[RMDB]
The record gives the reactivity of an RNA of 170 nucleotides to DMS and 2A3. DMS (dimethyl sulfate) methylates the pairing face of unpaired adenines and cytosines. Reactivities are rounded to 0.1 and cut off at 0 and 3. 2A3 adducts were read by reverse transcription with SuperScript II with manganese. The 2A3 profile rests on 18,050 reads. Conditions: 150 mM KOAc, 10 mM MgCl2 and 150 mM bicine (pH 8.5), 24 C.
RNA sequence: GGGAACGACUCGAGUAGAGUCGAAAAUUCCAUCUGAGUGCACUAUGUUUAGGGAUGCAGAGGGCCGUAUGACACCAUACUGCCAUGAUCCUACUGUUUUGCCUGGGGCUUUUGCGUACAGUCAGAUAUGCGUUCACCUUCGGGUGAACGAAAAGAAACAACAACAACAAC
Reactivity to DMS in 0.01 (KOAc 150mM, MgCl2 10mM, bicine 150mM(pH8.5), 24C), signal-to-noise 4, nucleotides 027 to 129: u000u000c030c020a160u030c000u020g020a090g000u000g000c060a040c080u010a090u070g070u020u010u010a140g000g000g000a080u050g040c070a060g010a100g020g010g050c000c100g090u000a030u030g040a200c220a140c270c020a020u020a000c060u020g040c040c040a080u000g030a000u010c110c040u020a170c080u020g030u040u020u010u020g040c050c010u040g030g020g020g010c070u010u000u050u090g040c070g030u000a000c070a080g030u040c040a040g000a050u030a070u020g040
Reactivity to 2A3 in 0.01 (KOAc 150mM, MgCl2 10mM, bicine 150mM(pH8.5), 24C), signal-to-noise 8, nucleotides 027 to 129: u030u000c010c000a010u030c020u030g040a020g040u040g020c020a020c030u050a050u190g140u050u080u300a050g010g010g030a010u040g060c000a000g040a110g050g030g000c010c020g000u010a000u020g080a120c030a020c100c050a000u010a020c000u010g000c010c000a040u080g010a040u040c020c010u070a120c010u030g080u040u050u100u150g100c010c010u030g000g020g040g000c000u050u060u110u110g020c020g010u060a040c030a060g060u010c010a010g020a030u050a060u200g080